Conditions: 150 mM KOAc, 10 mM MgCl2 and 150 mM bicine (pH 8.5), 24 C. The record gives the reactivity of an RNA of 177 nucleotides to 2A3 and DMS. 2A3 adducts were read by reverse transcription with SuperScript II with manganese. The DMS profile rests on 2,628 reads. DMS (dimethyl sulfate) methylates the pairing face of unpaired adenines and cytosines. It was measured as part of the RMDB library VIROID.

RNA sequence: GGGAACGACUCGAGUAGAGUCGAAAAAGAAGAAUCCAUUCACAGUAAAUCCUCGUCAGUUUCGUCGAUGACGACAGGUAAGUUUCCCUUUCCCUCUCUGCGUUUUAUUUUGCAAGGGGGUGUGCCCGAGUAUUUUUAACUUCGGUUAAAAAUACUCAAAAGAAACAACAACAACAAC
Reactivity to 2A3 in 0.01 (KOAc 150mM, MgCl2 10mM, bicine 150mM(pH8.5), 24C), signal-to-noise 2, nucleotides 027 to 126: a000g080a050a000g040a030a040u010c040c030a070u050u040c050a050c030a060g060u110a010a100a070u010c020c020u040c040g040u030c050a080g030u010u090u150c070g050u030c060g090a070u100g020a010c010g020a030c030a000g040g000u050a090a130g010u000u020u030c000c010c000u020u060u030c030c000c010u030c010u040c090u010g010c010g010u000u120u050u180a120u090u260u180u150g010c000a000a020g020g020g000g020g000u030g040u030g010c000c030c020
Reactivity to DMS in 0.01 (KOAc 150mM, MgCl2 10mM, bicine 150mM(pH8.5), 24C), signal-to-noise 3, nucleotides 027 to 126: a070g010a100a070g000a110a080u010c050c070a110u000u010c060a100c110a100g020u010a040a060a080u000c030c020u000c080g020u000c050a050g010u000u010u000c080g010u000c070g000a090u010g000a030c020g000a050c230a050g000g000u010a080a080g010u000u000u000c010c010c020u000u010u000c000c010c000u000c010u000c190u010g000c020g020u000u000u020u000a160u020u060u010u010g010c000a030a020g000g000g000g010g010u000g010u000g020c060c070c170